RNA sequence: GGGAACGACUCGAGUAGAGUCGAAAAUAACGUGUAGUAUUGUUUUAUUCAAUCAUUCAGAAUUGGUAAAUGCAGAAGCAGCAAAAUAACCAAAAGUAAUGACUUUCGUUUUAAUUUCUUAAGAUGACUAUCUAAGGAGCUUCGGCUCCUUAGAUAGAAAAGAAACAACAACAACAAC
Reactivity to DMS in 0.01 (KOAc 150mM, MgCl2 10mM, bicine 150mM(pH8.5), 24C), signal-to-noise 2, nucleotides 027 to 126: u000a080a080c080g010u000g010u000a070g010u000a180u000u000g000u000u000u000u010a090u000u040c210a150a150u010c020a040u000u020c020a150g000a140a070u000u000g000g000u010a020a160a150u010g000c060a070g020a120a150g060c300a120g030c040a050a040a040a070u000a050a050c010c010a010a040a040a130g020u060a020a020u000g020a060c140u000u010u000c030g020u000u000u000u020a020a120u010u020u020c040u020u000a060a030g000a050u010g000a040
Reactivity to 2A3 in 0.01 (KOAc 150mM, MgCl2 10mM, bicine 150mM(pH8.5), 24C), signal-to-noise 2, nucleotides 027 to 126: u140a010a000c020g020u020g040u020a170g100u030a160u040u060g030u000u020u000u050a040u050u130c020a020a120u020c010a030u000u000c040a000g100a300a180u030u000g000g000u050a110a060a050u040g000c010a000g080a230a070g000c080a050g010c010a060a000a130a160u030a030a050c020c020a000a000a000a070g220u280a050a050u040g060a090c000u070u030u020c020g000u000u000u040u080a070a010u080u180u140c010u050u010a030a110g050a120u070g070a070
This 177-nucleotide RNA was probed chemically with DMS and 2A3. For DMS the reverse transcriptase was MarathonRT.